[RMDB]
RNA sequence: GGGAACGACUCGAGUAGAGUCGAAAAAGUCUUUUUGUGCGUUAGGCCUUUCAUUUUGAUCAAGUGUGUAAGGGGUGGUGGGGUCGGAACAUGCCAUUGUGUUACGUAUCAUUACAUAUUAAGUGCCGAUUUAAGGCCCAUUCGUGGGCCUUAAAUCAAAAGAAACAACAACAACAAC
Reactivity to 2A3 in 0.01 (KOAc 150mM, MgCl2 10mM, bicine 150mM(pH8.5), 24C), signal-to-noise 1, nucleotides 027 to 126: a030g030u000c050u000u160u160u050u100g030u000g140c180g050u050u000a100g100g000c060c050u000u100u080c000a010u000u090u130u110g110a100u000c010a020a020g020u000g000u000g000u010a000a000g000g000g090g150u240g000g100u170g000g000g000g030u070c050g030g000a030a060c010a030u130g040c020c020a010u040u300g050u000g040u120u090a000c120g000u000a000u030c000a000u000u190a030c050a050u130a050u030u260a060a110g060u000g250c040c020
Reactivity to DMS in 0.01 (KOAc 150mM, MgCl2 10mM, bicine 150mM(pH8.5), 24C), signal-to-noise 1, nucleotides 027 to 126: a050g000u000c030u000u030u000u020u000g010u000g000c050g000u000u000a010g020g000c040c000u000u040u000c000a040u000u000u020u030g000a110u030c130a050a050g000u000g010u040g040u000a140a060g000g000g000g040u010g000g000u000g000g000g010g000u000c050g000g000a020a050c020a030u040g000c090c040a090u010u060g050u000g000u010u000a010c130g010u000a080u000c040a180u020u010a000c140a060u050a140u010u000a030a000g000u000g030c100c000